[RMDB]
RNA sequence: GGGAACGACUCGAGUAGAGUCGAAAAAGUGGUCCAUACGUGGACCACAGGCUUGUUUUAAGUUGCCUGCGAUCUCUUAAUGACUCAGGCAGCUAAAGCAAGUCUGAGUACCGCUACGGCGGUACAAGGAGUCACGAGACUUCGGUCUCGUGACUCCAAAAGAAACAACAACAACAAC
Reactivity to 2A3 in 0.01 (KOAc 150mM, MgCl2 10mM, bicine 150mM(pH8.5), 24C), signal-to-noise 1, nucleotides 027 to 126: a000g160u040g000g000u010c000c000a000u000a000c260g160u000g000g000a000c000c000a000c000a010g000g000c000u010u000g070u070u030u000u010a150a020g000u020u000g000c040c000u000g000c070g220a300u000c010u000c050u000u130a270a040u300g000a000c020u010c030a000g000g000c000a000g100c000u000a000a000a000g000c000a000a000g020u000c000u000g000a000g000u000a000c000c000g000c000u000a000c270g060g000c030g000g000u000a000c000a010a010
Record summary: Conditions: 150 mM KOAc, 10 mM MgCl2 and 150 mM bicine (pH 8.5), 24 C. The record gives the reactivity of an RNA of 177 nucleotides to 2A3. For 2A3 the reverse transcriptase was SuperScript II with manganese. Source: RMDB library RFM100, as collected in RNAgym.